Source: RMDB library M2RFOK, as collected in RNAgym. Chemical mapping of a 207-nucleotide RNA with 2A3. The reactions ran in a buffer of 150 mM KOAc, 10 mM MgCl2 and 150 mM bicine (pH 8.5), at 24 C.
[RMDB]
RNA sequence: GGGAACGACUCGAGUAGAGUCGAAAAGAAAGAAAGAAAGUUCAUUGUUUAUCGGAAACUUUAAACUAUAACCAUUCAAACUUUUCCAGAAGUUAGUUUGAAUAGAAAUUGAAAAGAAACUUCUGAAUGACCUUGGCACCGUUCGCGGUGCCAAGAACAGCACAACUAAGUUCGCUUAGUUGUGCUGAAAAGAAACAACAACAACAAC
Reactivity to 2A3 in 0.01 (KOAc 150mM, MgCl2 10mM, bicine 150mM(pH8.5), 24C), signal-to-noise 1, nucleotides 027 to 156: g060a000a050a000g080a020a040a020g020a100a120a020g020u030u040c030a020u080u040g060u160u160u070a130u250c030g010g030a050a030a030c000u050u000u130a060a070a020c040u050a030u060a300a060c020c040a000u010u010c000a000a000a000c000u000u000u010u000c110c000a000g000a020a010g000u000u020a000g020u000u000u030g010a010a020u030a120g010a000a080a040u100u140g020a000a050a000a000g010a000a000a000c010u000u010c000u020g000a000a050u050g040a050c010c000u010u000g000g010c000a000c000c010g050u060u070c140g000c000g060g000u010g070c000c000a000a000g000a000a000